[RMDB]
RNA sequence: GGGAACGACUCGAGUAGAGUCGAAAAAGCAGGCACUACGGUGCCUGCAAAUGAGGCAGACCAUGGGUUCUCAUUGUAAUAGUGUAGAAUGUUGGUUAACUGUGGACUCCCUGGCUCUGUCUCAAAACCAAUAGCCACCUUUCGAGGUGGCUAUUGGAAAAGAAACAACAACAACAAC
Reactivity to DMS in 0.01 (KOAc 150mM, MgCl2 10mM, bicine 150mM(pH8.5), 24C), signal-to-noise 1, nucleotides 027 to 126: a120g010c010a000g000g010c000a020c010u000a160c190g020g030u000g010c010c030u000g010c000a000a050a050u010g000a000g000g020c020a000g050a020c000c000a000u000g000g050g000u000u000c000u000c030a020u000u040g010u000a120a080u060a030g010u020g000u040a070g020a100a020u000g080u020u000g030g030u000u020a050a090c040u020g000u020g000g000a030c010u020c010c010c040u000g000g040c150u000c000u000g000u000c000u000c000a000a010a010a110
Reactivity to 2A3 in 0.01 (KOAc 150mM, MgCl2 10mM, bicine 150mM(pH8.5), 24C), signal-to-noise 4, nucleotides 027 to 126: a000g010c000a000g050g040c010a010c010u070a090c180g090g000u000g000c000c000u010g000c000a000a000a000u050g000a000g000g020c000a000g010a000c010c010a010u070g020g000g060u040u000c110u000c040a080u030u090g030u070a050a180u040a250g200u090g060u120a040g070a300a160u140g130u170u100g090g100u110u080a050a000c070u080g020u070g040g040a000c010u050c110c000c000u030g010g000c110u010c020u010g000u010c000u000c000a010a010a020a000
Source: RMDB library RFM100, as collected in RNAgym. Structure probing data (DMS and 2A3) for a 177-nucleotide construct. Values cover nucleotides 27 to 126. The DMS profile rests on 2,563 reads. 2A3 is a SHAPE reagent: it acylates the 2'-hydroxyl of flexible nucleotides of all four kinds.